[RMDB]
RNA sequence: GGGAACGACUCGAGUAGAGUCGAAAACAUCGAAGAAGCCUUUGCAGAGACCAAGAGUGCCACGACCCAGCAGAGACAACAAGAGAGGGUGCCAGGCAGUGUGCAAAAGGUUCAGGUGCCAGGCAGCGCCUGGACGUAGUUUCGACUACGUCCAGGCAAAAGAAACAACAACAACAAC
Reactivity to DMS in 0.01 (KOAc 150mM, MgCl2 10mM, bicine 150mM(pH8.5), 24C), signal-to-noise 2, nucleotides 027 to 126: c050a050u000c080g010a120a150g010a100a120g020c050c020u000u010u000g000c030a080g010a130g000a050c030c080a060a090g000a120g030u000g020c030c030a060c090g010a150c030c020c010a120g010c090a090g010a110g000a090c080a050a050c090a070a120g000a070g010a120g000g000g060u010g010c070c040a100g000g000c040a050g020u010g000u000g020c070a050a040a070a080g020g000u000u000c030a060g040g000u000g020c000c070a050g010g010c050a050g010c130
Reactivity to 2A3 in 0.01 (KOAc 150mM, MgCl2 10mM, bicine 150mM(pH8.5), 24C), signal-to-noise 1, nucleotides 027 to 126: c040a120u120c030g090a160a050g050a090a040g080c000c000u080u080u070g030c050a010g040a000g020a200c020c010a080a060g050a010g050u070g000c020c010a060c100g020a060c010c030c000a010g080c030a020g110a020g030a120c060a120a020c020a170a010g080a000g010a050g200g000g000u060g020c040c000a030g040g080c000a010g040u080g000u040g070c000a030a130a060a000g080g020u040u080c020a040g070g070u040g040c030c000a040g040g030c000a020g060c060
Chemical mapping of a 177-nucleotide RNA with DMS and 2A3. Reactivities are rounded to 0.1 and cut off at 0 and 3. Conditions: 150 mM KOAc, 10 mM MgCl2 and 150 mM bicine (pH 8.5), 24 C.